Record summary: Structure probing data (DMS) for a 177-nucleotide construct.
RNA sequence: GGGAACGACUCGAGUAGAGUCGAAAAUUAAAGGCCAUUCCCAGGCCAGGUAGCAGAGCGGAUAUAUAUAAACUCUCGCCAUAUAUAGCUACCAAAGGCGAGAGGAUAUAUAUAUCCGCUCAAAAAAGAAACAUAGUUUGUUCGCAAACUAUGUUUCAAAAGAAACAACAACAACAAC
Reactivity to DMS in 0.01 (KOAc 150mM, MgCl2 10mM, bicine 150mM(pH8.5), 24C), signal-to-noise 1, nucleotides 027 to 126: u020u010a070a110a090g030g160c000c030a060u000u000c000c010c000a270g000g040c010c090a120g020g020u000a070g030c160a190g010a020g000c000g000g000a000u000a020u010a000u000a000u000a040a060a170c000u020c000u010c000g010c000c020a080u000a060u000a090u020a090g060c060u010a060c070c080a060a150a050g000g000c010g000a010g000a000g030g020a070u010a000u000a020u010a010u000a000u000c000c000g050c010u000c000a000a010a000a070a060a040
About this RNA: DMS adducts were read by reverse transcription with MarathonRT.